[RMDB]
RNA sequence: GGGAACGACUCGAGUAGAGUCGAAAACGCACUCGCAGCUUAAUUACCUGCGCUGAGCCCUUCUCCCCCAGCUUGCCUGUGUCCUAGGGAAUUGGAAGGUCAUCCUUCACAGGAUCGUGUGGAAGUCAUUACUCGUGAGUGUUCGCACUCACGAGAAGCCGAAUAAUAUGUUCGCAUAUUAUUCGGCAAAAGAAACAACAACAACAAC
Reactivity to 2A3 in 0.01 (KOAc 150mM, MgCl2 10mM, bicine 150mM(pH8.5), 24C), signal-to-noise 2, nucleotides 027 to 156: c040g020c000a050c030u020c010g000c020a000g010c020u100u140a090a060u230u090a180c010c010u030g000c030g020c160u080g060a080g010c020c010c030u150u100c150u100c040c010c000c010c010a000g000c050u050u190g000c010c010u010g000u030g000u040c020c010u040a030g000g070g040a100a040u060u090g060g000a040a040g020g000u080c040a090u080c050c000u050u020c000a030c030a020g030g010a050u040c060g040u040g000u030g100g040a030a030g050u030c020a060u080u190a050c000u010c000g000u000g000a000g000u000g000u000u000c030g000c020a000c000u000c000a000c020g000a010g000a000a010
Reactivity to DMS in 0.01 (KOAc 150mM, MgCl2 10mM, bicine 150mM(pH8.5), 24C), signal-to-noise 2, nucleotides 027 to 156: c070g010c010a070c040u000c010g040c030a070g000c090u000u020a170a110u000u010a050c090c030u000g000c030g040c100u000g040a120g010c020c010c000u000u010c030u000c050c010c000c030c020a110g000c020u000u010g020c000c030u010g030u010g060u000c060c010u010a120g020g020g030a060a160u010u000g080g010a040a070g020g000u000c090a090u000c000c000u000u000c040a160c070a050g020g010a060u010c070g010u000g030u010g010g000a050a220g000u010c030a090u000u000a130c000u000c010g060u000g020a040g050u000g030u010u000c300g030c040a040c010u010c000a000c000g000a010g000a060a100